[RMDB]
RNA sequence: GGGAACGACUCGAGUAGAGUCGAAAACUACGAUGCUUCGGCAUCGUAGAAAGAAAACUCUAGACGAAUGCGCUGAAAAACGUCUUGAGACAGCGCAAAGAAAAACUUGGUUCUUCGGAACCAAGAACACUCUUGAGAAGUUCGCUUCUCAAGAGUGAAAAGAAACAACAACAACAAC
Reactivity to 2A3 in 0.01 (KOAc 150mM, MgCl2 10mM, bicine 150mM(pH8.5), 24C), signal-to-noise 2, nucleotides 027 to 126: c000u000a000c010g010a000u010g000c010u040u090c210g080g000c000a000u010c000g000u010a000g000a010a010a000g020a010a050a010a010c040u030c030u050a030g060a110c010g080a260a110u140g000c010g010c000u050g020a070a070a000a040a040c010g040u000c040u060u070g030a050g000a000c010a000g010c020g020c000a050a080a000g020a020a090a020a010a010c010u000u010g000g000u000u020c000u010u020c190g110g000a000a000c000c000a000a000g000a000a000
Reactivity to DMS in 0.01 (KOAc 150mM, MgCl2 10mM, bicine 150mM(pH8.5), 24C), signal-to-noise 2, nucleotides 027 to 126: c020u010a010c010g000a010u000g000c020u000u010c300g010g020c000a000u010c000g000u010a020g000a020a090a070g020a170a060a040a110c030u010c010u000a040g010a040c030g000a130a110u000g000c000g050c020u030g000a050a070a050a060a120c090g000u000c030u000u010g000a140g010a050c000a010g010c000g000c000a030a070a150g000a010a100a100a090a130c020u000u000g000g000u000u000c000u000u010c180g010g000a010a000c010c000a000a000g000a100a100